[RMDB]
RNA sequence: GGGAACGACUCGAGUAGAGUCGAAAAGUGUCGGACUCCCAAGUGCGAAUAUAUUUUAUCCCUAAACAGGGAGUGGAAAGCACGUCCUGGAGUGGAAAACACGUCCAUCCCAAAGCGAGAAAUGAAAACUGUUUUCAAGAUUCGUCUUGAAAACAGUAAAAGAAACAACAACAACAAC
Reactivity to 2A3 in 0.01 (KOAc 150mM, MgCl2 10mM, bicine 150mM(pH8.5), 24C), signal-to-noise 4, nucleotides 027 to 126: g000u020g010u010c010g020g080a040c020u000c000c010c020a050a030g020u000g010c020g080a160a010u100a010u010a070u180u150u120u080a060u070c010c010c000u140a240a240a070c090a090g010g000g010a010g000u040g030g100a080a060a020g030c000a000c010g070u120c000c060u050g000g030a020g000u000g020g090a070a070a000a010c050a010c010g070u000c040c010a060u030c030c010c010a050a030a040g160c120g050a120g120a090a130a070u200g090a090a080a040
Reactivity to DMS in 0.01 (KOAc 150mM, MgCl2 10mM, bicine 150mM(pH8.5), 24C), signal-to-noise 4, nucleotides 027 to 126: g030u010g000u000c040g020g020a070c010u000c000c010c190a110a140g020u000g020c010g010a100a080u010a100u010a090u000u020u000u000a090u010c000c000c000u020a090a110a120c250a060g010g000g000a020g000u010g010g000a100a140a130g000c020a010c010g000u000c210c120u000g010g010a020g010u000g010g000a080a100a060a030c010a030c040g000u010c110c090a130u000c000c000c020a060a080a110g010c120g000a100g000a060a070a120u010g000a070a070a070

Source: RMDB library M2PK90, as collected in RNAgym. Structure probing data (2A3 and DMS) for a 177-nucleotide construct. Conditions: 150 mM KOAc, 10 mM MgCl2 and 150 mM bicine (pH 8.5), 24 C.